[RMDB]
RNA sequence: GGGAACGACUCGAGUAGAGUCGAAAAGGUCUACGAUUCGAUAGCGACAUUCCGCCCCGACGCGGUAUUUCAUCUCGCGGCCCAAAGCUAUCCGGCGGUUUCGUGGGCCCGGCCGGUUGAGACGCUGCGAAGGGCACAUAUUCGUAUGUGCCCUUCGAAAAGAAACAACAACAACAAC
Reactivity to DMS in 0.01 (KOAc 150mM, MgCl2 10mM, bicine 150mM(pH8.5), 24C), signal-to-noise 3, nucleotides 027 to 126: g010g010u000c040u000a040c030g000a090u000u000c120g000a060u000a060g010c010g000a120c220a170u000u000c040c050g010c030c010c050c110g010a110c090g020c030g010g000u000a030u010u000u000c110a080u000c050u000c030g010c060g010g000c020c020c020a060a070a090g010c010u010a040u010c000c090g010g030c040g010g000u000u000u010c070g000u000g010g010g020c030c010c060g000g000c030c030g030g010u000u000g010a080g020a110c080g010c080u010g000
Reactivity to 2A3 in 0.01 (KOAc 150mM, MgCl2 10mM, bicine 150mM(pH8.5), 24C), signal-to-noise 1, nucleotides 027 to 126: g000g000u040c000u020a040c010g020a060u000u140c030g030a030u070a020g040c010g040a010c030a100u140u020c000c030g040c030c000c060c080g050a050c050g020c000g030g000u010a090u040u150u150c050a070u030c080u050c040g060c020g010g000c050c000c040a010a060a000g020c000u000a020u030c020c030g040g000c030g010g000u000u110u060c010g000u000g020g000g010c000c000c010g020g010c010c010g030g080u060u030g040a030g010a020c040g000c040u060g020

The record gives the reactivity of an RNA of 177 nucleotides to DMS and 2A3. The RNA was probed in 150 mM KOAc, 10 mM MgCl2 and 150 mM bicine (pH 8.5) at 24 C.